[RMDB]
RNA sequence: GGGAACGACUCGAGUAGAGUCGAAAACGCAAAGGGCGAGCUUUUGUCCGGAAUGGUUCCGCCGUGAUCGGGCCAUGCAAUAGUUGCCAACGACAACUAUGCUCCGGUUGCUCAGGCAGCGUAACGCACAAUGGAACAACCUUCGGGUUGUUCCAAACCAAUAGACAAGAUUCGUCUUGUCUAUUGGAAAAGAAACAACAACAACAAC
Reactivity to DMS in 0.01 (KOAc 150mM, MgCl2 10mM, bicine 150mM(pH8.5), 24C), signal-to-noise 4, nucleotides 027 to 156: c050g030c050a040a070a090g010g020g050c030g000a060g010c110u000u000u000u010g020u000c030c010g000g000a080a080u000g000g010u000u010c000c010g000c060c090g020u000g000a070u000c020g010g000g030c020c020a050u000g000c040a090a090u000a030g010u000u010g000c000c010a160a160c200g010a110c010a010a020c000u000a020u010g010c050u000c030c030g000g010u000u000g010c010u020c060a140g010g020c020a090g010c020g020u000a050a100c070g000c050a080c070a130a210u000g010g010a040a020c010a020a010c000c010u000u000c300g030g020g020u010u000g010u000u000c000c000a000a010a060
Reactivity to 2A3 in 0.01 (KOAc 150mM, MgCl2 10mM, bicine 150mM(pH8.5), 24C), signal-to-noise 9, nucleotides 027 to 156: c030g020c000a100a100a080g090g070g010c040g010a040g020c030u100u150u160u220g090u080c010c010g010g020a050a050u070g000g020u300u300c020c020g020c050c080g160u160g040a160u100c010g000g000g000c010c010a020u050g020c020a050a300u010a020g000u000u000g010c040c070a110a060c110g070a110c010a000a000c010u010a000u020g010c020u010c010c000g000g020u030u090g010c000u000c020a020g130g000c020a020g010c010g020u050a070a040c060g020c060a040c040a070a210u070g000g000a000a000c000a000a000c000c010u040u060c160g030g000g000u000u000g000u000u000c000c000a000a000a000
An RNA of 207 nucleotides, treated with DMS and 2A3 and read out base by base. For DMS, 12,193 sequencing reads were counted. The reactions ran in a buffer of 150 mM KOAc, 10 mM MgCl2 and 150 mM bicine (pH 8.5), at 24 C. The data come from the RNA Mapping Database (RMDB), library M2RFPK.